[RMDB]
RNA sequence: GGGAACGACUCGAGUAGAGUCGAAAAGGUCAGGAGUUUGAGACAAGCCUGGCCAACAUGGUGAAACCUCGUUUCUACUAAAAAUACCAAAAACAAUUAGCUGAGCAUGGUGGCGCGCGUCUGUAAUCCCAGCUUCUGGGGAGGCCGAGGCAGGAGAGCUACGAAAAUGGUUCGCCAUUUUCGUAGCAAAAGAAACAACAACAACAAC
Reactivity to 2A3 in 0.01 (KOAc 150mM, MgCl2 10mM, bicine 150mM(pH8.5), 24C), signal-to-noise 1, nucleotides 027 to 156: g000g000u010c000a000g020g000a040g080u060u120u090g090a050g020a000c000a070a000g040c000c000u010g000g000c000c000a000a000c020a030u080g020g030u010g040a000a070a080c000c070u040c030g000u040u050u000c090u080a100c050u090a010a060a000a050a130u160a120c020c050a060a090a020a120a020c070a130a120u080u140a050g040c090u070g000a000g020c020a010u040g010g000u040g040g010c000g030c020g030c000g110u000c010u050g040u070a070a030u050c000c000c000a040g000c000u140u050c060u070g010g000g000g000a020g020g000c000c020g000a030g000g090c020a010g000g050a050g020a010